[RMDB]
RNA sequence: GGGAACGACUCGAGUAGAGUCGAAAAUUGACGAAGAUUGGUUUGCAUCCUCCAUCGUGGGCGGUGAGUCUCGAAUCCGCCCUGUUGCCGGUCACCUCAACACGGUGGAGCCCUACACGCUGCCCUCAUUUACUCAGCAUUUCGAUGCUGAGUAAAUAAAAGAAACAACAACAACAAC
Reactivity to 2A3 in 0.01 (KOAc 150mM, MgCl2 10mM, bicine 150mM(pH8.5), 24C), signal-to-noise 9, nucleotides 027 to 126: u090u100g050a040c060g040a050a030g110a130u080u150g040g050u090u090u100g030c020a060u070c020c010u020c000c000a030u030c040g030u050g010g010g010c030g000g000u030g020a070g080u030c030u030c100g050a040a060u020c010c010g020c040c000c000u000g000u010u060g030c060c030g020g020u040c020a030c030c010u060c110a030a030c010a010c030g000g010u010g020g000a010g000c010c000c000u030a030c040a020c030g010c000u040g020c000c000c000u040c010
Reactivity to DMS in 0.01 (KOAc 150mM, MgCl2 10mM, bicine 150mM(pH8.5), 24C), signal-to-noise 6, nucleotides 027 to 126: u030u010g020a090c060g010a090a080g000a090u010u010g000g010u010u010u030g010c070a090u010c090c000u010c020c020a040u020c040g010u010g010g020g020c290g020g010u000g000a050g000u010c050u030c070g000a130a120u010c030c030g010c010c000c030u010g000u010u020g000c120c040g010g000u010c030a030c030c010u020c060a120a130c060a050c070g000g010u000g010g000a040g000c040c010c030u000a080c100a080c060g010c030u010g000c010c000c010u010c080

This 177-nucleotide RNA was probed chemically with 2A3 and DMS. Conditions: 150 mM KOAc, 10 mM MgCl2 and 150 mM bicine (pH 8.5), 24 C. The DMS profile rests on 15,589 reads. The 2A3 profile rests on 13,575 reads.